The data come from the RNA Mapping Database (RMDB), libraries RFM100 and RFMREP. This 177-nucleotide RNA was probed chemically with DMS and 2A3. The reactions ran in a buffer of 150 mM KOAc, 10 mM MgCl2 and 150 mM bicine (pH 8.5), at 24 C.
RNA sequence: GGGAACGACUCGAGUAGAGUCGAAAAUAGUAGGCCGCCUCAACAGAGGACGUCUAUGAAUGGUGAGGGAGCCAACCCUUGUAAUUGCAAAGCGUGGUUUUAAUACCACUAUGCAAGCCAAGUCUAACCUCACAUGAAAGUUCGCUUUCAUGUGAGGAAAAGAAACAACAACAACAAC
Reactivity to DMS in 0.01 (KOAc 150mM, MgCl2 10mM, bicine 150mM(pH8.5), 24C), signal-to-noise 4, nucleotides 027 to 126: u020a170g000u000a030g000g000c000c240g020c000c000u000c000a140a170c240a160g000a010g040g010a080c120g010u010c010u000a010u000g020a050a100u010g010g030u010g000a020g010g010g000a110g020c160c100a000a020c000c020c000u010u000g020u020a050a130u010u000g000c010a010a020a100g040c270g000u010g000g000u000u000u000u030a080a080u030a040c010c000a000c000u000a150u010g000c000a000a000g000c030c030a040a130g010u010c040u020a100a280
Reactivity to 2A3 in 0.01 (KOAc 150mM, MgCl2 10mM, bicine 150mM(pH8.5), 24C), signal-to-noise 5, nucleotides 027 to 126: u090a000g060u010a010g000g010c040c030g020c010c030u030c040a160a260c050a130g000a000g000g000a060c010g000u000c000u000a020u070g070a110a070u050g010g000u010g010a000g000g020g000a010g020c010c010a010a030c010c000c000u010u010g050u070a040a040u000u000g000c010a020a010a050g150c110g050u020g020g060u020u020u090u140a160a170u200a070c000c000a000c000u010a010u000g000c010a000a000g010c000c000a020a010g010u000c010u010a050a080